Source information
Chemical mapping of a 177-nucleotide RNA with 2A3 and DMS. It was measured as part of the RMDB library TTRDEL. Conditions: 150 mM KOAc, 10 mM MgCl2 and 150 mM bicine (pH 8.5), 24 C. The DMS profile rests on 3,142 reads. For DMS the reverse transcriptase was MarathonRT. For 2A3 the reverse transcriptase was SuperScript II with manganese. Values are in units of 0.01, from 0 to 300, in steps of 10.

[RMDB]
RNA sequence: GGGAACGACUCGAGUAGAGUCGAAAAGAUAUGGAGCCGUGGGAGUUCCACGGUCGGAAACGACCGGAGAACGACGAUCACGGAACUACUCCUAAGUCAAAUCGUAAAAGCUUCGGCUUUUACGAAAGAUAUGAAAAAGCUUCGGCUUUUUCAUAUCAAAAGAAACAACAACAACAAC
Reactivity to 2A3 in 0.01 (KOAc 150mM, MgCl2 10mM, bicine 150mM(pH8.5), 24C), signal-to-noise 1, nucleotides 027 to 126: g020a010u020a000u060g010g000a000g000c010c020g000u010g000g000g000a060g000u000u000c040c040a050c050g000g000u000c000g030g000a010a010a010c000g000a010c010c000g000g020a100g020a010a000c010g300a080c010g000a000u000c010a000c000g000g050a050a000c000u100a030c010u000c000c010u020a030a000g030u030c040a000a040a290u070c010g000u010a000a010a010a000g000c000u080u110c300g110g010c000u000u060u010u000a000c010g000a010a010a000
Reactivity to DMS in 0.01 (KOAc 150mM, MgCl2 10mM, bicine 150mM(pH8.5), 24C), signal-to-noise 4, nucleotides 027 to 126: g000a050u000a150u000g000g000a010g020c020c000g030u000g010g010g000a050g020u000u000c010c300a150c030g030g000u000c000g010g000a040a050a140c000g000a010c000c000g000g000a300g000a020a000c000g020a120c220g010a090u010c020a000c000g010g000a080a050c110u000a200c020u010c010c000u000a020a130g010u000c020a070a120a190u000c000g000u000a000a000a000a000g010c000u000u020c230g030g010c000u000u000u000u000a000c000g000a010a060a060